[RMDB]
RNA sequence: GGGAACGACUCGAGUAGAGUCGAAAACAUUCUCUUCGGAGAAUGGUACAAACCUUUGUGUGAAUCGAUUGAUCCAACAGCCUAAGCUCCCAUUGGGAGCAUAGGACAUGGAUUAGAGAUUCACACUCUGGUAUUCAGUAUCGCUUCGGCGAUACAAUGGUGUUAAGUUCUUCGGAACUUAACACCAAAAAGAAACAACAACAACAAC
Reactivity to DMS in 0.01 (KOAc 150mM, MgCl2 10mM, bicine 150mM(pH8.5), 24C), signal-to-noise 1, nucleotides 027 to 156: c010a000u010u000c000u000c020u000u000c300g090g000a000g000a010a040u000g000g000u000a130c070a150a070a060c000c000u010u000u010g010u010g010u000g000a020a000u000c010g000a300u010u000g030a010u010c000c010a010a090c120a200g010c010c010u000a010a160g030c000u000c000c010c000a300u010u010g050g030g000a020g000c030a010u000a010g040g050a050c090a300u000g000g000a010u000u000a030g010a300g000a000u010u000c010a010c000a000c000u000c000u000g010g000u000a070u000u000c070a120g000u000a000u000c000g010c010u010u000c300g070g000c010g050a000u000a010c010a020a140
Reactivity to 2A3 in 0.01 (KOAc 150mM, MgCl2 10mM, bicine 150mM(pH8.5), 24C), signal-to-noise 3, nucleotides 027 to 156: c000a000u000u000c000u000c000u020u080c250g070g000a010g000a020a010u030g000g020u120a090c130a050a180a020c010c000u030u010u010g000u010g020u000g000a000a010u000c020g150a230u050u190g020a000u010c020c010a000a070c080a190g040c020c000u040a090a040g020c000u010c060c020c050a300u190u300g020g000g000a000g010c000a000u010a000g000g020a010c060a130u030g000g000a000u000u000a010g000a030g000a000u000u020c000a000c000a010c000u000c000u000g000g000u020a140u060u210c060a030g000u000a000u010c000g010c010u060u080c270g100g000c000g000a030u040a000c010a010a110